RNA sequence: GGGAACGACUCGAGUAGAGUCGAAAAUAUGAAACGCGAAACCCGCUGAAGUGAAACAUCUCAGUAAGCGGAGGAAAAGAAAGAGAAAUCGAUUCCGUAAGUAGUGGCGAGCGAAAGCGGAUGGAGCGAUGUAAAAGUUGUUCGCAACUUUUACAUCAAAAGAAACAACAACAACAAC
Reactivity to 2A3 in 0.01 (KOAc 150mM, MgCl2 10mM, bicine 150mM(pH8.5), 24C), signal-to-noise 4, nucleotides 027 to 126: u300a040u100g090a050a050a020c060g000c010g040a030a010a030c020c010c020g000c020u040g020a100a150g180u020g090a030a170a080c070a190u060c020u000c030a010g020u020a070a010g000c010g000g030a030g050g050a040a080a020a030g070a020a090a010g150a000g040a020a050a040u080c030g030a040u030u070c000c000g010u010a000a010g010u000a000g000u010g080g150c190g030a020g000c000g020a030a000a000g010c020g040g000a000u010g000g040a060g050c090
Reactivity to DMS in 0.01 (KOAc 150mM, MgCl2 10mM, bicine 150mM(pH8.5), 24C), signal-to-noise 4, nucleotides 027 to 126: u010a080u030g000a050a090a140c110g000c030g010a090a150a170c060c000c000g030c010u020g000a150a150g010u010g000a120a150a180c240a060u000c040u000c050a030g000u000a080a050g020c020g030g010a080g010g000a040a060a050a060g010a030a040a050g010a070g010a050a070a050u000c030g000a170u010u000c000c000g000u000a030a050g010u000a100g000u000g010g040c200g010a250g000c010g000a050a120a300g010c030g000g010a030u000g000g000a150g000c160